[RMDB]
RNA sequence: GGGAACGACUCGAGUAGAGUCGAAAAUCGGGUCGCCGAGCUUUUCCUCGAUCCCGGUCAGCGGGAACGGAUUCCGCGGGUGUAUCAAAAAUCGCGGAUCACCACGCGCCGGAUGGCGGUCGACCCGCACUUUCUCUUUGUUCGCAAAGAGAAAGUGAAAAGAAACAACAACAACAAC
Reactivity to DMS in 0.01 (KOAc 150mM, MgCl2 10mM, bicine 150mM(pH8.5), 24C), signal-to-noise 2, nucleotides 027 to 126: u010c030g020g020g030u000c020g040c030c010g020a160g020c120u000u000u010u000c010c000u010c120g000a090u010c090c000c010g020g020u030c130a200g010c020g020g000g000a120a090c220g000g000a060u010u000c050c010g000c000g000g000g010u000g000u000a130u010c260a060a050a060a080a040u010c020g010c010g000g000a000u000c030a110c030c000a140c010g020c000g000c010c030g000g000a050u000g020g000c000g020g000u000c010g010a040c020c000c000g010
Reactivity to 2A3 in 0.01 (KOAc 150mM, MgCl2 10mM, bicine 150mM(pH8.5), 24C), signal-to-noise 3, nucleotides 027 to 126: u080c000g020g000g010u010c010g000c010c010g040a080g190c090u170u140u090u040c010c010u040c000g040a050u110c000c010c000g000g000u110c080a040g010c010g000g050g040a060a020c050g100g000a040u280u060c010c000g000c070g010g040g030u110g020u100a200u240c150a050a100a070a090a000u090c040g010c010g030g010a000u020c010a010c000c020a140c010g000c020g000c020c000g000g000a020u050g040g050c010g000g000u090c030g000a000c010c020c020g000

The data come from the RNA Mapping Database (RMDB), library OK2TST. The record gives the reactivity of an RNA of 177 nucleotides to DMS and 2A3. For DMS, 2,278 sequencing reads were counted. The 2A3 profile rests on 2,834 reads. 2A3 is a SHAPE reagent: it acylates the 2'-hydroxyl of flexible nucleotides of all four kinds. The RNA was probed in 150 mM KOAc, 10 mM MgCl2 and 150 mM bicine (pH 8.5) at 24 C.